The record gives the reactivity of an RNA of 177 nucleotides to DMS.
The reactions ran in a buffer of 150 mM KOAc, 10 mM MgCl2 and 150 mM bicine (pH 8.5), at 24 C.
DMS adducts were read by reverse transcription with MarathonRT.
The DMS profile rests on 2,429 reads.
[RMDB]
RNA sequence: GGGAACGACUCGAGUAGAGUCGAAAAGAUAUGGAAUCCCAUGCAAGACAACUACCCCUCGAGUUGGGUCGGAAACGACCCAAGACUCGAGGGGUAGUUGUUGAUGACCAUGUGGAUUCCUAAGUCAGUGUUAUAAAUACUUCGGUAUUUAUAACACAAAAGAAACAACAACAACAAC
Reactivity to DMS in 0.01 (KOAc 150mM, MgCl2 10mM, bicine 150mM(pH8.5), 24C), signal-to-noise 3, nucleotides 027 to 126: g000a070u000a300u010g000g000a000a030u000c010c010c000a010u000g000c010a100a090g000a010c000a010a010c000u000a000c010c000c020c000u000c000g000a050g010u000u000g000g010g020u010c000g020g010a080a090a250c010g000a010c000c010c010a060a050g010a200c000u000c010g000a020g000g000g000g000u010a000g000u010u000g000u000u000g000a050u010g010a140c300c020a000u000g010u020g020g010a000u000u000c000c000u000a000a040g010u000c060a130